Description: An RNA of 177 nucleotides, treated with 2A3 and DMS and read out base by base. High DMS reactivity at an A or C suggests that its Watson-Crick edge is free.
[RMDB]
RNA sequence: GGGAACGACUCGAGUAGAGUCGAAAACAGAGGCGGUACUUUAACGUGGAGUACGACUCACUUUUAAAGAAGUUCAUGUCUGAAGGUGCGAGUCAAGGAUCUUCCACGCCCAAGGACGAGAAACGUGCAUGAUGGGUGGGUUCGCCCACCCAUCAUGAAAAGAAACAACAACAACAAC
Reactivity to 2A3 in 0.01 (KOAc 150mM, MgCl2 10mM, bicine 150mM(pH8.5), 24C), signal-to-noise 1, nucleotides 027 to 126: c060a040g020a100g120g040c080g060g060u060a020c040u020u080u120a190a130c080g140u120g020g030a060g010u060a040c000g040a020c000u000c000a110c040u050u130u020u220a190a120a010g040a090a000g000u120u160c130a090u300g050u020c010u000g040a090a010g000g010u090g040c070g040a020g040u020c110a040a050g070g010a060u100c000u140u000c050c080a040c090g000c010c020c000a010a010g000g000a000c010g020a010g010a210a110a000c090g000u080g020
Reactivity to DMS in 0.01 (KOAc 150mM, MgCl2 10mM, bicine 150mM(pH8.5), 24C), signal-to-noise 1, nucleotides 027 to 126: c090a130g000a040g020g000c050g010g030u000a000c070u000u000u000a110a070c100g020u000g000g010a070g000u000a100c090g000a040c020u010c010a060c010u000u000u000u000a050a090a050g000a010a070g010u000u020c200a070u010g010u000c020u000g010a090a070g000g000u010g010c090g010a100g020u000c120a080a120g010g000a040u000c130u010u010c000c000a120c000g020c000c000c010a010a300g030g000a080c040g010a090g000a050a030a070c040g000u010g000
Source information
For 2A3, 717 sequencing reads were counted. The data come from the RNA Mapping Database (RMDB), library OK2TST. Values cover nucleotides 27 to 126. DMS adducts were read by reverse transcription with MarathonRT.